[RMDB]
RNA sequence: GGGAACGACUCGAGUAGAGUCGAAAACUUGUGUGCCAUUCAUGCCAAGCGUGUCACCAUAAUGCCCAAAGACAUCCAGUUAGCGCGACGCAUUCGCGGCGAGCGUGCUUAAGCUGACACGGCAUUAUAAUUAUACUCGUUUCGACGAGUAUAAUUAAAAAGAAACAACAACAACAAC
Reactivity to 2A3 in 0.01 (KOAc 150mM, MgCl2 10mM, bicine 150mM(pH8.5), 24C), signal-to-noise 9, nucleotides 027 to 126: c020u050u030g020u020g030u040g110c010c020a060u050u060c020a020u130g060c010c030a040a020g020c030g040u050g030u050c030a020c070c010a010u040a060a020u080g020c010c000c000a030a040a000g140a020c050a040u070c050c000a030g020u040u060a030g010c000g000c000g020a030c010g010c030a050u120u160c150g020c090g120g000c000g020a090g030c000g000u010g000c000u030u060a070a020g010c000u010g030a030c020a020c080g010g000c000a000u020u050a020
Reactivity to DMS in 0.01 (KOAc 150mM, MgCl2 10mM, bicine 150mM(pH8.5), 24C), signal-to-noise 9, nucleotides 027 to 126: c060u000u010g010u010g010u010g010c040c030a070u010u020c040a040u020g010c020c050a070a100g000c110g010u010g010u010c050a070c050c050a060u010a040a030u020g000c000c000c090a080a110a090g000a100c140a090u010c100c030a040g000u000u010a070g010c030g020c010g000a070c030g000c010a090u020u050c150g020c150g000g000c010g010a100g010c010g010u000g010c010u010u020a060a090g000c020u000g010a120c120a090c180g000g000c020a050u000u010a070

Overview:
Structure probing data (2A3 and DMS) for a 177-nucleotide construct. Reactivities are given for positions 27 through 126. The data come from the RNA Mapping Database (RMDB), library OK1LIB. DMS adducts were read by reverse transcription with MarathonRT.